The record gives the reactivity of an RNA of 207 nucleotides to 2A3. The data come from the RNA Mapping Database (RMDB), library ARCHII.

RNA sequence: GGGAACGACUCGAGUAGAGUCGAAAACCUCCCGGCUGCAAGGUUAUUCACGUCAGCUGGCCUCCUGCCGGGUACCUUGGCAUGGGGCGAGAUCCAAGGGUGCUGGCCUUCCUUGCAGCGUGCGACUGCGCGGCGUGGAAGGUGAGAUCCAAAACAGCUCAUACAUGGUGUUCGCACCAUGUAUGAGAAAAGAAACAACAACAACAAC
Reactivity to 2A3 in 0.01 (KOAc 150mM, MgCl2 10mM, bicine 150mM(pH8.5), 24C), signal-to-noise 3, nucleotides 027 to 156: c010c020u010c010c000c000g060g010c010u000g010c040a130a200g080g000u260u190a220u150u260c100a080c200g070u040c010a030g000c030u050g020g000c000c000u000c000c000u000g000c000c000g000g000g000u040a070c010c030u030u120g010g010c010a000u000g000g030g000g050c020g010a010g010a040u120c190c120a090a060g050g020g010u070g040c020u010g040g000c000c000u030u000c020c010u020u230g010c000a010g000c000g010u030g020c020g270a130c110u250g000c010g000c000g010g040c010g000u050g000g010a010a000g000g000u040g060a000g000a020u100c130c070a030a040a010a030c020a040g040